[RMDB]
RNA sequence: GGGAACGACUCGAGUAGAGUCGAAAAGGGCGUAACUGGACCAUAUCUUCGCGGUGGUGCUGUUGAUAUUCACCAUCGGCACACUACUACUGCCAGCCAAUCCCAUUCUGCCGCUGUGGCCGUACCACGUGGGGCAGGGUUUCGACCCUGCCCCACGAAAAGAAACAACAACAACAAC
Reactivity to DMS in 0.01 (KOAc 150mM, MgCl2 10mM, bicine 150mM(pH8.5), 24C), signal-to-noise 1, nucleotides 027 to 126: g000g010g040c060g060u010a130a250c030u010g010g010a150c000c000a080u010a080u000c080u020u000c120g020c010g020g000u000g000g010u000g000c180u000g020u010u000g040a100u000a070u000u010c140a080c230c090a050u000c000g020g060c010a030c010a060c040u000a010c030u000a080c090u000g030c030c040a050g050c120c050a060a290u000c000c000c010a130u010u020c060u000g000c030c020g010c120u000g060u020g020g000c060c050g030u000a270c020c020a160
Reactivity to 2A3 in 0.01 (KOAc 150mM, MgCl2 10mM, bicine 150mM(pH8.5), 24C), signal-to-noise 1, nucleotides 027 to 126: g030g020g000c030g000u050a080a000c060u030g010g030a030c020c080a050u020a050u050c090u120u120c060g040c090g100g050u030g010g020u030g000c070u000g050u120u050g070a040u050a080u090u130c070a060c050c030a000u000c000g010g060c030a000c040a010c000u050a010c000u000a010c030u040g010c000c000a020g000c020c000a090a070u050c000c000c000a000u120u010c050u040g090c020c020g030c090u100g050u100g060g010c000c030g000u060a090c000c060a000

Conditions: 150 mM KOAc, 10 mM MgCl2 and 150 mM bicine (pH 8.5), 24 C. An RNA of 177 nucleotides, treated with DMS and 2A3 and read out base by base. For 2A3, 1,067 sequencing reads were counted. It was measured as part of the RMDB library OK2TST.